[RMDB]
RNA sequence: GGGAACGACUCGAGUAGAGUCGAAAAGCUCUGAUUCACGUGGCAGAGCAGAAAACACGUGAGAAGCUGAUGUCGAUAAGAUAUCAGCAGUGAGCCAGACAUACGAUACGUAUGUCUGGCUCACGAAGAGCGUAUACUGAUUCGUCAGUAUACGCUCAAAAGAAACAACAACAACAAC
Reactivity to DMS in 0.01 (KOAc 150mM, MgCl2 10mM, bicine 150mM(pH8.5), 24C), signal-to-noise 1, nucleotides 027 to 126: g030c020u000c000u000g020a120u020u000c010a050c070g010u000g000g000c020a080g000a050g060c300a060g000a070a060a110a070c000a000c000g000u000g000a020g000a260a000g000c000u000g000a000u000g000u020c040g000a210u070a120a150g000a000u000a000u000c010a010g080c000a010g020u000g000a000g120c010c000a000g000a070c000a030u000a000c000g050a240u040a140c300g160u150a030u080g050u000c000u000g000g120c000u000c040a000c000g000a090a080
Reactivity to 2A3 in 0.01 (KOAc 150mM, MgCl2 10mM, bicine 150mM(pH8.5), 24C), signal-to-noise 4, nucleotides 027 to 126: g020c000u000c010u020g060a060u070u010c000a000c020g010u010g040g000c100a040g010a030g080c060a000g120a030a070a000a010c000a000c000g000u020g010a020g050a100a040g000c000u000g000a010u000g000u010c010g060a140u070a300a100g000a010u010a040u010c010a000g010c000a000g000u000g000a000g000c000c000a000g000a010c000a000u010a000c000g300a300u130a300c190g000u000a000u000g000u000c000u000g000g000c000u000c000a010c000g000a010a000